[RMDB]
RNA sequence: GGGAACGACUCGAGUAGAGUCGAAAACACACGCACGGCGCCUCCCCCACAGUUCUCCGAUUCCAAUUUUCCGCAAGGAAUGUCAUCGCGACCGCCCCGCCGGUGUCUGGACACCCGCAGUACGUCGAUAAAGCAUGUGUUUCGACACAUGCUUUAUAAAAGAAACAACAACAACAAC
Reactivity to 2A3 in 0.01 (KOAc 150mM, MgCl2 10mM, bicine 150mM(pH8.5), 24C), signal-to-noise 4, nucleotides 027 to 126: c070a000c020a000c010g040c020a030c050g040g000c010g030c000c010u020c010c000c000c000c010a000c010a020g040u040u010c040u030c000c010g030a050u080u040c030c020a060a060u080u040u080u060c020c000g030c050a040a000g020g020a060a050u070g060u030c050a070u070c030g020c020g050a030c020c000g010c000c020c000c010g000c010c000g010g010u020g040u000c030u030g050g010a020c010a010c020c000c020g020c000a000g040u090a050c070g030u040c040g060
Reactivity to DMS in 0.01 (KOAc 150mM, MgCl2 10mM, bicine 150mM(pH8.5), 24C), signal-to-noise 5, nucleotides 027 to 126: c070a100c110a070c090g000c060a070c040g000g020c030g010c040c020u010c000c010c000c000c020a050c090a080g010u000u010c020u000c000c020g000a090u010u010c030c030a080a080u010u000u000u020c010c020g020c220a110a170g000g000a030a020u010g010u010c050a080u020c060g010c070g010a060c050c040g000c020c020c020c050g010c050c050g010g000u010g000u010c040u000g010g000a070c070a070c010c020c060g020c040a070g000u010a070c070g010u000c090g020